[RMDB]
The record gives the reactivity of an RNA of 177 nucleotides to 2A3 and DMS. DMS (dimethyl sulfate) methylates the pairing face of unpaired adenines and cytosines. 2A3 adducts were read by reverse transcription with SuperScript II with manganese.

RNA sequence: GGGAACGACUCGAGUAGAGUCGAAAAUGCUUUAACGAAGCUAGAAAGGUCACACUAUGACUCAAUUUUUAACUUGACAAAUCAGAUUUUAUGGCCAAAUCAGGAGAGAAAUUAUACGUCAUGGCUGACUCUGUAGGAGUUUCGACUCCUACAGAGUAAAAGAAACAACAACAACAAC
Reactivity to 2A3 in 0.01 (KOAc 150mM, MgCl2 10mM, bicine 150mM(pH8.5), 24C), signal-to-noise 3, nucleotides 027 to 126: u070g000c000u070u040u030a070a010c090g060a030a030g000c020u020a050g230a080a140a010g080g070u120c030a030c000a000c060u050a010u110g020a010c000u020c090a040a030u020u010u000u040u060a040a040c010u010u030g010a010c010a000a070a010u010c000a040g040a150u080u180u120u260a100u080g010g000c010c000a020a030a050u010c010a020g040g030a020g010a000g020a030a010a010u080u060a070u030a070c070g010u020c010a010u040g020g000c020u020g010
Reactivity to DMS in 0.01 (KOAc 150mM, MgCl2 10mM, bicine 150mM(pH8.5), 24C), signal-to-noise 4, nucleotides 027 to 126: u010g010c020u000u000u000a170a100c260g000a110a010g030c000u000a090g020a070a110a120g000g000u000c070a100c190a070c050u000a020u000g000a030c020u010c210a030a010u020u000u000u010u000a030a230c020u000u000g010a010c060a070a110a150u000c030a040g010a160u030u040u010u010a140u020g000g000c000c060a030a130a150u000c010a010g010g020a060g010a090g000a020a000a030u000u000a070u000a090c250g020u000c020a010u010g010g010c250u000g000

The data come from the RNA Mapping Database (RMDB), library OK2TST.